[RMDB]
RNA sequence: GGGAACGACUCGAGUAGAGUCGAAAACGUCCCCGUCGUACAGAAUGGUAACAUAUCUCUCCAAAUAACUGAGCUUGGGUAUACGGGGAAACCCAACCCCUUGGGAAGAUUGGGUAUAUGGCUAAAUUACAUCGAUUGUACUUCGGUACAAUCGAAAGAAUUUGAUCAUGUUCGCAUGAUCAAAUUCAAAAGAAACAACAACAACAAC
Reactivity to DMS in 0.01 (KOAc 150mM, MgCl2 10mM, bicine 150mM(pH8.5), 24C), signal-to-noise 1, nucleotides 027 to 156: c060g010u000c020c000c000c090g000u010c040g060u010a150c040a120g010a090a130u010g020g030u010a120a110c000a050u000a100u000c020u000c010u000c000c030a040a130a130u010a030a190c090u000g010a070g000c070u010u010g030g010g010u000a040u000a070c090g000g000g000g000a100a050a080c010c010c030a020a070c040c000c000c050u000u000g060g000g050a160a070g010a120u010u000g000g010g000u010a080u000a040u010g000g000c070u000a040a070a160u010u000a100c040a200u000c000g010a040u000u000g010u000a010c000u000u000c300g060g020u000a000c010a010a010u000c000g010a000a030a100
Reactivity to 2A3 in 0.01 (KOAc 150mM, MgCl2 10mM, bicine 150mM(pH8.5), 24C), signal-to-noise 3, nucleotides 027 to 156: c030g060u020c000c020c020c000g100u110c030g050u040a060c040a120g090a100a140u090g040g040u110a160a030c000a030u060a100u040c050u020c030u040c050c020a050a130a100u130a170a110c050u080g030a000g070c040u070u070g020g000g000u030a020u030a050c020g000g000g010g000a020a040a020c000c000c000a000a030c010c010c000c000u020u050g070g010g030a060a010g060a100u050u030g000g000g040u020a030u000a010u080g050g000c060u070a130a050a120u170u130a080c050a100u010c000g000a000u000u000g000u010a000c000u000u040c140g010g010u000a000c000a000a000u000c000g010a010a000a010